[RMDB]
RNA sequence: GGGAACGACUCGAGUAGAGUCGAAAAGCGGGGCUUGAAACGCGGGUAGCGCGCACGCCCGGCGAAGAAGUUCGCAUACGCGGUGUGCUGGUGCCGAAGUGUCUGCUGCAACGGCACGCUCCACACCUAGAACAUACCGUAUUCGUACGGUAUGUAACCCUUAUACCAAGUUCGCUUGGUAUAAGGGAAAAGAAACAACAACAACAAC
Reactivity to DMS in 0.01 (KOAc 150mM, MgCl2 10mM, bicine 150mM(pH8.5), 24C), signal-to-noise 3, nucleotides 027 to 156: g020c010g010g000g030g040c010u010u000g010a080a130a060c020g020c000g010g030g010u010a120g030c020g070c050g020c060a120c150g020c000c000c000g010g000c000g020a050a280g010a100a230g000u000u010c030g020c040a130u000a150c140g010c100g000g050u010g030u000g020c000u000g010g000u000g000c000c020g010a090a300g030u000g020u000c090u000g010c090u010g030c040a090a250c060g000g020c000a020c010g030c030u010c040c000a050c000a020c000c010u010a090g000a140a070c010a020u010a000c000c000g020u000a060u000u000c300g050u000a010c010g000g000u000a020u010g010u000a040a110
Reactivity to 2A3 in 0.01 (KOAc 150mM, MgCl2 10mM, bicine 150mM(pH8.5), 24C), signal-to-noise 7, nucleotides 027 to 156: g050c050g000g010g020g000c020u050u100g070a130a150a050c060g000c040g030g060g090u210a090g100c020g000c010g000c030a010c030g010c000c000c000g010g010c020g000a030a030g040a030a010g080u030u050c040g010c090a040u070a200c080g000c070g040g000u010g010u010g000c050u080g040g000u010g000c010c010g010a070a040g040u040g040u130c150u200g100c090u080g010c040a040a010c010g010g010c010a000c020g120c010u000c010c000a010c010a020c010c020u030a030g020a070a000c010a000u000a000c000c000g000u000a020u040u060c110g030u040a010c000g000g000u000a010u000g000u000a010a010
Chemical mapping of a 207-nucleotide RNA with DMS and 2A3. Source: RMDB library M2RFOK, as collected in RNAgym. Reactivities are given for positions 27 through 156.